[RMDB]
RNA sequence: GGGAACGACUCGAGUAGAGUCGAAAAAGACAACAGCAAUUGAUAUUCCAUUUGCUGCAAGACAUUUCCAUUAUUUCGCAAGUGUUAUUGAAACAGAAGAAGGUACAGUAAAUGAUAUCGAUAAAGAUGGAUUACAAGCUUUCGAGCUUGUAAUCCAAAAAGAAACAACAACAACAAC
Reactivity to 2A3 in 0.01 (KOAc 150mM, MgCl2 10mM, bicine 150mM(pH8.5), 24C), signal-to-noise 1, nucleotides 027 to 126: a000g120a050c000a080a030c020a030g090c000a000a070u040u040g000a000u000a030u090u300c150c000a000u000u000u000g000c000u040g020c060a050a000g040a110c000a100u000u000u090c000c140a070u200u210a070u050u200u130c040g000c040a080a080g000u000g090u260u040a160u070u180g130a200a070a010c150a130g080a030a030g150a180a020g040g000u000a000c030a040g000u000a000a000a130u040g070a000u000a110u100c070g000a000u050a090a220a060g000a100
Reactivity to DMS in 0.01 (KOAc 150mM, MgCl2 10mM, bicine 150mM(pH8.5), 24C), signal-to-noise 1, nucleotides 027 to 126: a070g040a170c140a120a210c130a160g030c220a040a000u000u000g000a030u000a030u000u020c100c010a000u000u000u000g000c010u000g060c060a020a020g000a140c090a060u000u010u000c080c060a120u030u060a070u100u030u000c000g060c300a030a050g000u010g000u010u000a050u000u000g050a070a100a000c230a040g000a070a020g000a050a070g000g030u000a180c040a060g000u020a030a020a010u000g000a070u000a020u010c000g000a010u000a080a050a060g040a060
An RNA of 177 nucleotides, treated with 2A3 and DMS and read out base by base. High DMS reactivity at an A or C suggests that its Watson-Crick edge is free. For 2A3, 372 sequencing reads were counted. Conditions: 150 mM KOAc, 10 mM MgCl2 and 150 mM bicine (pH 8.5), 24 C.